RNA sequence: GGGAACGACUCGAGUAGAGUCGAAAAGCUGGGUUCAGUCAGUGCGCCCGAUUACAGCUGUCCGCAAGCUUAUGAGCCGCUCGUCAUUGUGGUUGCGCCUGUUCGGCGUCGGGAGCCGAGGGUACGAGUUGGAAGUGGCAUUCGUGCCACUUCCAACAAAAGAAACAACAACAACAAC
Reactivity to 2A3 in 0.01 (KOAc 150mM, MgCl2 10mM, bicine 150mM(pH8.5), 24C), signal-to-noise 1, nucleotides 027 to 126: g040c020u040g000g070g000u190u030c010a000g180u030c000a000g010u100g050c080g020c000c000c000g020a000u030u100a020c070a030g060c010u080g030u110c010c060g000c130a120a050g000c010u130u060a060u180g020a010g040c070c000g010c010u020c030g120u000c060a070u040u100g010u090g020g150u100u100g000c000g000c000c040u110g120u130u100c030g010g000c000g000u040c000g030g030g030a000g000c000c000g020a030g000g010g010u070a030c110g010a000
Reactivity to DMS in 0.01 (KOAc 150mM, MgCl2 10mM, bicine 150mM(pH8.5), 24C), signal-to-noise 2, nucleotides 027 to 126: g000c050u020g010g000g030u000u040c080a050g020u010c020a020g000u010g000c050g000c060c000c030g020a080u020u010a090c170a040g000c000u000g000u000c020c020g050c100a060a050g000c050u010u040a120u020g000a150g040c020c030g010c020u000c030g000u000c170a110u010u000g020u000g020g010u020u000g000c130g000c020c030u000g010u050u030c010g010g030c030g000u010c080g010g000g020a140g010c010c000g040a040g020g020g000u020a010c070g000a240
Chemical mapping of a 177-nucleotide RNA with 2A3 and DMS.